This 177-nucleotide RNA was probed chemically with DMS. The reactions ran in a buffer of 150 mM KOAc, 10 mM MgCl2 and 150 mM bicine (pH 8.5), at 24 C. The DMS profile rests on 2,520 reads. Source: RMDB library TTRINS, as collected in RNAgym. For DMS the reverse transcriptase was MarathonRT. Reactivities are given for positions 27 through 126.
[RMDB]
RNA sequence: GGGAACGACUCGAGUAGAGUCGAAAAGAUAUGGAGAUGAUGUCAGGUCACAUGGGAGUCUUCCGACUCGGAAACGAGUCGUCGUGAGGACGAAGAACAUGUGAGCCUGACAUCAUCUCCUAAGUCAUCCAUUAAGCUACUUCGGUAGCUUAAUGGAAAAAGAAACAACAACAACAAC
Reactivity to DMS in 0.01 (KOAc 150mM, MgCl2 10mM, bicine 150mM(pH8.5), 24C), signal-to-noise 2, nucleotides 027 to 126: g010a060u000a300u000g010g000a010g020a020u000g010a020u000g010u000c000a010g000g010u000c010a020c000a000u010g010g000g020a090g030u000c000u000u000c000c000g000a010c000u010c010g010g000a150a130a220c010g000a020g000u000c020g000u020c280g010u000g000a020g000g020a020c000g010a080a180g000a080a190c010a000u000g010u000g000a140g010c010c000u000g010a010c010a000u000c000a010u000c000u000c000c000u000a000a060g020u000c050a190